[RMDB]
RNA sequence: GGGAACGACUCGAGUAGAGUCGAAAAAUUGAGGCUGAGGCAUUUGAGAUAAUUGAAGAAGUAGACCGUCGCGGUGGGAUGCUUGAAGCUGUCAAAUCACGGUGGGUACAGCGUCAGAUCCAGGAUGUUGCUUUCGAACGACAACAAGAAAUCGAGGAUACUUCGUUAUCUUCGGAUAACGAAGUAUAAAAGAAACAACAACAACAAC
Reactivity to 2A3 in 0.01 (KOAc 150mM, MgCl2 10mM, bicine 150mM(pH8.5), 24C), signal-to-noise 3, nucleotides 027 to 156: a000u070u130g010a020g000g000c020u020g010a010g030g010c030a020u060u080u070g100a080g010a040u230a140a120u110u090g030a080a060g050a020a010g030u110a040g030a110c070c010g050u090c020g010c030g040g020u070g000g010g040a040u130g050c020u040u110g030a050a000g000c030u030g060u070c050a090a090a040u090c040a020c070g060g020u080g000g040g010u120a040c010a020g010c010g050u010c020a000g000a030u000c020c020a020g060g000a060u100g020u010u050g030c090u010u080u060c030g000a030a010c040g080a040c030a110a000c000a060a100g120a070a120a010u050c040g010a020g120g070
Reactivity to DMS in 0.01 (KOAc 150mM, MgCl2 10mM, bicine 150mM(pH8.5), 24C), signal-to-noise 1, nucleotides 027 to 156: a110u000u000g040a070g020g010c080u000g010a110g030g070c020a110u000u000u000g020a100g000a120u000a030a150u000u010g020a080a090g030a080a120g030u000a080g020a110c000c020g020u010c040g030c060g000g030u000g000g000g030a050u000g040c070u000u000g010a090a110g020c010u000g040u020c060a060a090a100u000c030a070c030g010g020u000g030g030g040u000a040c060a030g000c080g000u000c010a030g000a070u010c030c000a130g000g030a190u000g000u000u010g010c030u010u000u000c050g010a120a150c010g010a040c030a000a040c040a090a150g010a050a090a130u000c000g010a090g020g000
Structure probing data (2A3 and DMS) for a 207-nucleotide construct. Reactivities are rounded to 0.1 and cut off at 0 and 3. It was measured as part of the RMDB library OK3TST. Conditions: 150 mM KOAc, 10 mM MgCl2 and 150 mM bicine (pH 8.5), 24 C. Reactivities are given for positions 27 through 156.